[RMDB]
RNA sequence: GGGAACGACUCGAGUAGAGUCGAAAACGGGGUGUGGCUGCUGCCAAGGCGGACAGCAAGUUCGCGCUGUAUGCUGACUACCAGGCCGCUGUGCACCGGGCAUAUGGGCGGUGUUUUGCAGGAUUGGAGCAUGGAAAACAUUCGUGUUUUCCAUGCUAAAAGAAACAACAACAACAAC
Reactivity to 2A3 in 0.01 (KOAc 150mM, MgCl2 10mM, bicine 150mM(pH8.5), 24C), signal-to-noise 1, nucleotides 027 to 126: c030g070g000g020g000u030g040u050g060g030c010u030g030c000u000g010c000c030a030a030g140g000c020g020g000a060c010a010g020c020a090a000g030u040u100c040g000c010g040c090u020g000u070a110u080g000c000u030g040a120c030u090a090c020c010a050g000g000c000c010g000c040u050g000u030g050c030a010c040c050g040g110g000c020a120u150a100u190g060g060g080c030g000g050u050g030u010u060u070u090g050c070a030g000g100a120u050u140g030g050
Reactivity to DMS in 0.01 (KOAc 150mM, MgCl2 10mM, bicine 150mM(pH8.5), 24C), signal-to-noise 3, nucleotides 027 to 126: c080g000g010g010g010u000g010u000g010g030c020u010g000c050u000g010c040c040a130a120g010g010c040g030g010a090c010a020g020c090a090a060g040u000u010c150g010c140g010c050u010g020u000a090u010g010c020u000g020a130c040u000a120c040c040a140g000g010c020c060g000c030u000g020u010g000c010a070c080c050g010g000g030c100a120u010a070u000g010g000g010c040g010g000u000g010u000u000u020u010g010c070a070g000g010a170u000u000g000g000